Source: RMDB library M2RFPK, as collected in RNAgym.
Structure probing data (2A3) for a 207-nucleotide construct.
[RMDB]
RNA sequence: GGGAACGACUCGAGUAGAGUCGAAAAGGCUAGGUGGUAUUCCGGUGUGGGAUACUUGGUAAUAUGUAACGCUAAUUGCAUAAGAUUGUAGGACGGAAUUUACAUUCUUGGUUUUUAUAAACCUGAAAAAAGGAAUUACACUUCGGUGUAAUUCCAAGCUGACAUAGUGGUUCGCCACUAUGUCAGCAAAAGAAACAACAACAACAAC
Reactivity to 2A3 in 0.01 (KOAc 150mM, MgCl2 10mM, bicine 150mM(pH8.5), 24C), signal-to-noise 1, nucleotides 027 to 156: g010g000c000u000a010g000g130u010g000g080u100a110u050u090c080c040g080g020u150g030u160g040g060g020a030u020a060c040u030u100g010g000u000a050a050u020a050u100g070u010a100a020c140g050c070u070a050a050u030u040g000c010a020u040a180a040g080a130u030u080g040u030a060g010g030a020c070g000g020a030a000u000u120u120a060c110a060u000u070c000u000u040g060g060u020u000u010u000u010a140u070a130a060a000c000c010u040g160a010a000a000a000a010a020g000g000a000a000u000u000a000c000a000c000u050u080c200g090g070u020g000u000a000a000u000u030c000c000a000a000
The 2A3 profile rests on 634 reads. The RNA was probed in 150 mM KOAc, 10 mM MgCl2 and 150 mM bicine (pH 8.5) at 24 C.